[RMDB]
RNA sequence: GGGAACGACUCGAGUAGAGUCGAAAAGACGUGGAGGUUGCGCGCCCUCCUUUGCGCGUAAGUACGUCGAAAUUCGGUGCUUUGGAUCGCACCGUUCGAUCCAUUUGAUAUCCGCUUAGUGCCGCGGUUGGGCAUUUACACUUACCCGAAAGGGGAACGUAAUCGGGAGUUUCGACUCCCGAUUACGAAAAGAAACAACAACAACAAC
Reactivity to 2A3 in 0.01 (KOAc 150mM, MgCl2 10mM, bicine 150mM(pH8.5), 24C), signal-to-noise 1, nucleotides 027 to 156: g010a010c010g030u050g060g260a140g070g050u060u080g000c000g100c030g000c020c040c000u120c020c030u050u050u120g000c020g000c010g000u000a000a000g140u120a000c050g000u000c010g000a100a060a000u090u150c010g030g000u010g000c000u000u070u090g020g000a020u020c020g040c070a170c090c000g000u140u000c000g000a020u000c000c000a040u060u020u070g250a260u150a100u140c010c000g060c010u020u050a030g120u060g040c050c050g020c010g040g040u080u070g010g000g010c040a050u030u000u120a070c040a010c010u100u080a000c010c050c000g000a110a070a070g030g010g000g010a000a030